[RMDB]
RNA sequence: GGGAACGACUCGAGUAGAGUCGAAAAAAAUCAGUUUCCUGAUUAGGAGAAAGUAAAGUCAGCCUUCAAAAGGAAGUGUCAUCUUUGCUCAACAAUGUCAGUCGUAAUGACUAACGAGAUGACAGGAGACGUCCUAUUAUUUCGAUAAUAGGACGUCAAAAGAAACAACAACAACAAC
Reactivity to DMS in 0.01 (KOAc 150mM, MgCl2 10mM, bicine 150mM(pH8.5), 24C), signal-to-noise 4, nucleotides 027 to 126: a060a060a040u000c100a100g010u010u000u000c040c000u000g020a120u010u000a070g000g010a080g010a080a060a060g010u010a060a050a100g020u010c090a100g010c070c000u000u000c110a040a050a100a060g020g010a060a080g010u010g010u000c020a080u000c000u010u000u000g000c090u000c110a110a100c130a040a080u020g010u000c040a010g000u000c040g010u000a130a110u010g000a020c010u010a040a040c030g010a010g020a040u000g000a010c010a070g000g000a170
Reactivity to 2A3 in 0.01 (KOAc 150mM, MgCl2 10mM, bicine 150mM(pH8.5), 24C), signal-to-noise 3, nucleotides 027 to 126: a000a000a000u100c000a030g020u020u030u060c000c000u040g080a180u030u170a070g110g000a030g070a090a130a020g040u110a060a060a030g040u040c040a040g040c020c020u050u000c070a110a090a140a060g160g020a040a030g040u030g010u080c010a050u030c010u020u050u040g050c030u010c100a030a060c030a070a110u090g020u020c020a010g040u000c010g080u100a160a080u200g060a040c010u010a040a000c000g000a010g060a130u030g010a010c000a000g020g050a050
This 177-nucleotide RNA was probed chemically with DMS and 2A3. It was measured as part of the RMDB library OK2TST. In probing experiments dimethyl sulfate is read out at A N1 and C N3, which are open when not base-paired. The reactions ran in a buffer of 150 mM KOAc, 10 mM MgCl2 and 150 mM bicine (pH 8.5), at 24 C.